[RMDB]
RNA sequence: GGGAACGACUCGAGUAGAGUCGAAAAAGCUGCCAGCUCUACGGAGCUGGCAGCACUUUUUCCUAUGCAUAUACUUCUUUGAGAAUUGCUUCUAAAGAGGUAUAGGGCAUGGGAAAAUGGGGCAAAACAUUAGGGUGAAUUUCGAUUCACCCUAAUGAAAAGAAACAACAACAACAAC
Reactivity to 2A3 in 0.01 (KOAc 150mM, MgCl2 10mM, bicine 150mM(pH8.5), 24C), signal-to-noise 2, nucleotides 027 to 126: a000g020c010u010g000c000c000a100g000c000u000c000u010a080c300g080g000a000g000c000u000g000g040c000a000g000c000a000c000u010u020u000u000u000c000c000u010a010u000g000c010a000u020a000u010a030c000u010u030c010u030u020u130g160a050g040a110a070u290u210g130c120u130u000c000u040a030a000a000g010a000g000g020u010a000u000a000g050g140g000c000a000u000g000g010g050a000a000a000a000u050g020g000g060g100c120a030a000a110a090
Reactivity to DMS in 0.01 (KOAc 150mM, MgCl2 10mM, bicine 150mM(pH8.5), 24C), signal-to-noise 2, nucleotides 027 to 126: a070g070c010u010g040c070c010a040g060c030u010c000u000a090c210g010g000a080g060c020u000g020g050c020a000g000c000a000c000u000u000u000u000u000c000c000u010a020u000g000c000a080u010a000u000a000c000u000u000c020u000u000u000g010a030g000a050a080u010u020g010c250u010u000c010u010a000a000a010g000a010g000g010u000a000u010a010g000g010g000c000a000u000g000g000g000a000a000a000a000u000g000g010g000g010c170a070a080a080a170

Notes: The data come from the RNA Mapping Database (RMDB), libraries RFM100 and RFMREP. An RNA of 177 nucleotides, treated with 2A3 and DMS and read out base by base. For 2A3 the reverse transcriptase was SuperScript II with manganese. For DMS the reverse transcriptase was MarathonRT. The reactions ran in a buffer of 150 mM KOAc, 10 mM MgCl2 and 150 mM bicine (pH 8.5), at 24 C.